[RMDB]
RNA sequence: GGGAACGACUCGAGUAGAGUCGAAAAAUGUGCAGUAUUUAUAUUGGAUCAUACUGGUGAUUAUAAAAGUUCCUAGGAGGCUAGAAGAGCCAACCAACAGAGAAGGGAAAGCAGUCUGUUCUGAACAUAUUCAUAAGCCAUUCGUGGCUUAUGAAUAAAAAGAAACAACAACAACAAC
Reactivity to 2A3 in 0.01 (KOAc 150mM, MgCl2 10mM, bicine 150mM(pH8.5), 24C), signal-to-noise 5, nucleotides 027 to 126: a010u100g050u080g020c030a020g030u110a070u040u160u020a200u040a110u090u150g100g030a050u090c020a010u030a050c010u020g100g020u130g080a080u060u100a050u100a170a090a030a010g010u020u000c000c000u010a070g040g040a030g030g000c040u060a040g040a130a040g040a110g040c010c010a030a090c030c000a030a050c020a040g040a030g040a090a070g030g010g020a030a010a000g030c030a000g030u010c020u020g050u060u010c020u030g020a040a020c020a030
Reactivity to DMS in 0.01 (KOAc 150mM, MgCl2 10mM, bicine 150mM(pH8.5), 24C), signal-to-noise 6, nucleotides 027 to 126: a040u000g010u020g030c010a020g000u000a020u010u020u030a080u030a140u060u030g020g020a090u010c160a030u010a020c030u010g030g020u010g000a040u000u010a080u020a090a060a130a180g010u000u000c000c010u010a070g020g010a280g000g010c010u000a070g020a110a080g020a070g010c030c030a040a110c090c040a080a070c160a080g010a090g010a070a080g000g000g000a050a080a070g000c060a050g000u010c040u010g010u000u000c040u010g010a070a090c240a130

This 177-nucleotide RNA was probed chemically with 2A3 and DMS. The data come from the RNA Mapping Database (RMDB), libraries RFM100 and RFMREP. The RNA was probed in 150 mM KOAc, 10 mM MgCl2 and 150 mM bicine (pH 8.5) at 24 C. Values cover nucleotides 27 to 126. For 2A3 the reverse transcriptase was SuperScript II with manganese.